Structure probing data (DMS and 2A3) for a 177-nucleotide construct.
RNA sequence: GGGAACGACUCGAGUAGAGUCGAAAAGUACGGAUCAGUGCGCCGUACGAUCUCAGGUACAGUCGGCCGGAUCUAGGUACGUACGCGCCGGCCUGUGCAGUACGUACUGAUCGUAGUACAUGCGCCGUAUCGGAAAGUCAUUCGUGACUUUCCGAUAAAAAGAAACAACAACAACAAC
Reactivity to DMS in 0.01 (KOAc 150mM, MgCl2 10mM, bicine 150mM(pH8.5), 24C), signal-to-noise 4, nucleotides 027 to 126: g010u000a010c000g000g000a040u000c040a090g020u000g010c080g020c130c050g000u010a010c010g000a100u010c040u000c080a090g010g020u000a050c070a090g010u010c060g010g020c050c030g000g000a070u010c070u010a160g010g020u010a030c080g000u000a030c010g010c140g020c020c080g020g010c110c080u010g000u000g010c050a180g010u000a020c010g010u000a010c010u010g010a040u000c030g020u010a100g020u000a030c030a120u010g020c080g010c020c010g020
Reactivity to 2A3 in 0.01 (KOAc 150mM, MgCl2 10mM, bicine 150mM(pH8.5), 24C), signal-to-noise 3, nucleotides 027 to 126: g000u000a020c010g020g020a040u070c050a060g100u080g090c090g000c030c040g020u030a020c000g020a060u000c030u020c050a060g150g090u080a070c020a070g030u020c030g020g020c050c020g060g000a030u010c040u100a050g170g010u120a070c050g030u010a000c020g000c070g010c020c010g110g060c050c040u070g020u050g010c030a030g010u030a010c000g030u010a010c000u040g010a010u040c020g060u070a070g040u010a040c020a090u120g050c030g010c030c010g040

The DMS profile rests on 6,017 reads. For 2A3, 3,714 sequencing reads were counted. For DMS the reverse transcriptase was MarathonRT.